[RMDB]
RNA sequence: GGGAACGACUCGAGUAGAGUCGAAAAAGUUGGUGAAUUUGCACGACUUUCGCUCAGACGAAAUUGAGCACCUUGUUGUAGAGGAGUUGGUCAAGAAGAGAGAGGAGUGUCUGGAUGCACUAGAGUCAUACGGUCAAGUUUUCGAACUUGACCGUAUAAAAGAAACAACAACAACAAC
Reactivity to DMS in 0.01 (KOAc 150mM, MgCl2 10mM, bicine 150mM(pH8.5), 24C), signal-to-noise 4, nucleotides 027 to 126: a070g010u000u010g020g030u000g010a170a130u000u010u010g020c020a060c010g020a060c050u000u010u000c090g010c010u000c060a060g000a120c150g020a050a070a120u010u000g000a040g010c020a170c010c030u010u000g010u000u010g010u020a060g000a050g000g010a090g000u000u000g010g010u000c060a050a060g000a040a050g000a070g010a050g010a060g010g000a100g010u010g000u000c030u010g000g000a100u010g010c070a030c050u010a070g010a100g000u000c100
Reactivity to 2A3 in 0.01 (KOAc 150mM, MgCl2 10mM, bicine 150mM(pH8.5), 24C), signal-to-noise 1, nucleotides 027 to 126: a000g110u050u010g020g020u040g060a090a250u090u020u250g020c020a010c070g010a040c000u000u010u040c040g000c010u050c050a020g000a120c100g200a160a010a060u180u080g010a030g000c020a030c000c000u000u110g040u060u080g070u100a070g010a040g090g000a070g050u100u070g060g080u090c090a000a000g070a080a010g060a000g010a000g010a010g070g000a040g110u020g000u090c040u070g000g000a050u120g000c000a040c090u020a060g000a040g110u120c010

Structure probing data (DMS and 2A3) for a 177-nucleotide construct. For DMS the reverse transcriptase was MarathonRT. 2A3 adducts were read by reverse transcription with SuperScript II with manganese. The reactions ran in a buffer of 150 mM KOAc, 10 mM MgCl2 and 150 mM bicine (pH 8.5), at 24 C. For DMS, 3,722 sequencing reads were counted. The 2A3 profile rests on 720 reads.